The record gives the reactivity of an RNA of 170 nucleotides to DMS and 2A3. Values are in units of 0.01, from 0 to 300, in steps of 10. The 2A3 profile rests on 2,228 reads. For 2A3 the reverse transcriptase was SuperScript II with manganese. DMS adducts were read by reverse transcription with MarathonRT.
RNA sequence: GGGAACGACUCGAGUAGAGUCGAAAACUUGUCCUUUCUUAUUAUUCCUCGGAUGUUCCCCAGCCAGGGAUUGUCCUCCUCGAGUCUCUUGAGAUUCUUGUUGACCUUCCGGAGCUCCCUCUCGAGUAACGGCGCCUGUUCGCAGGCGCCAAAAGAAACAACAACAACAAC
Reactivity to DMS in 0.01 (KOAc 150mM, MgCl2 10mM, bicine 150mM(pH8.5), 24C), signal-to-noise 2, nucleotides 027 to 129: c060u070u000g010u040c040c120u000u000u000c060u050u000a090u120u000a060u040u020c000c000u000c120g000g030a000u010g000u000u000c100c000c010c100a060g000c060c150a030g020g020g010a160u060u000g000u040c000c000u000c010c030u020c070g000a110g000u020c000u020c130u040u040g020a120g020a140u080u000c010u000u000g000u040u050g020a200c090c060u020u060c000c100g000g000a000g000c000u000c000c030c030u000c030u000c000g040a120g000u070a050a030c020
Reactivity to 2A3 in 0.01 (KOAc 150mM, MgCl2 10mM, bicine 150mM(pH8.5), 24C), signal-to-noise 2, nucleotides 027 to 129: c030u030u030g050u130c000c000u030u030u080c010u090u100a200u140u120a190u080u150c010c000u020c040g010g020a010u000g030u010u000c010c020c010c000a000g020c020c010a060g000g000g000a010u000u160g040u000c000c000u000c030c010u000c010g000a000g040u020c000u000c000u030u070g080a010g000a050u080u100c000u030u070g130u130u060g090a070c000c010u090u060c000c050g030g030a010g040c000u030c000c050c000u000c000u000c000g010a010g000u010a050a000c000
Reactivities are given for positions 27 through 129.